[RMDB]
RNA sequence: GGGAACGACUCGAGUAGAGUCGAAAACUCAGUGUUAUACGGGGGAAGAAGGGGCGGGGGCCAGGCCUCCCGCUUCCGACAACCAUUGGAGCGCCUCGUGCUGGGCGGGCCUAAAACUACAUUUCCCGCAUGAGUAAGGCUUCGGCCUUACUCAUGCAAAAGAAACAACAACAACAAC
Reactivity to 2A3 in 0.01 (KOAc 150mM, MgCl2 10mM, bicine 150mM(pH8.5), 24C), signal-to-noise 1, nucleotides 027 to 126: c030u020c050a020g000u040g040u240u070a160u020a180c050g000g000g000g010g020a080a200g000a020a010g000g020g000g000c010g000g000g000g000g000c070c040a060g000g060c000c010u000c000c000c000g000c000u240u110c010c010g000a030c000a000a030c020c000a020u030u180g000g000a060g060c040g030c000c010u010c020g040u040g010c060u050g000g010g000c000g080g000g000c000c000u000a040a020a000a070c060u040a010c020a140u000u000u010c000c000c000
Description
Source: RMDB library RFM100, as collected in RNAgym. An RNA of 177 nucleotides, treated with 2A3 and read out base by base. For 2A3, 637 sequencing reads were counted. The RNA was probed in 150 mM KOAc, 10 mM MgCl2 and 150 mM bicine (pH 8.5) at 24 C. 2A3 adducts were read by reverse transcription with SuperScript II with manganese.